[RMDB]
RNA sequence: GGGAACGACUCGAGUAGAGUCGAAAACACGCCUUCGGGCGUGAAUGAGGAAAAGUUAUAACGGUUAUGUUCAUAAUAACAGUCGUAAGCGUAUAGCUUUUCCCCUUAACGUCCCGGUUCGCCGGGAGAAGGUAAAAGUCUUCGGACUUUUACCUUCAAAAGAAACAACAACAACAAC
Reactivity to 2A3 in 0.01 (KOAc 150mM, MgCl2 10mM, bicine 150mM(pH8.5), 24C), signal-to-noise 2, nucleotides 027 to 126: c000a010c020g000c020c010u060u100c240g090g000g000c040g000u010g000a000a150u180g000a130g000g020a010a000a010a010g010u040u010a030u020a210a140c020g010g100u010u000a010u020g040u090u060c060a070u100a300a020u120a240a070c060a060g020u000c020g030u000a000a000g130c000g000u010a010u000a010g000c010u000u000u000u000c000c000c000c000u020u040a130a040c060g080u080c000c010c000g000g020u010u030c150g000c020c000g050g030g010a060
Reactivity to DMS in 0.01 (KOAc 150mM, MgCl2 10mM, bicine 150mM(pH8.5), 24C), signal-to-noise 1, nucleotides 027 to 126: c000a010c010g020c000c010u010u030c180g000g010g030c000g000u000g010a030a070u010g010a020g000g030a010a010a020a020g020u000u000a010u000a080a070c000g000g000u000u000a000u010g000u010u010c050a160u010a100a120u010a140a080c300a080g000u010c000g010u000a020a010g010c000g000u000a010u000a000g010c000u000u000u000u000c000c000c000c020u000u010a100a180c140g000u000c000c010c000g010g010u010u020c160g030c000c000g020g000g010a000

An RNA of 177 nucleotides, treated with 2A3 and DMS and read out base by base.
Reactivities are given for positions 27 through 126.
The DMS profile rests on 1,053 reads.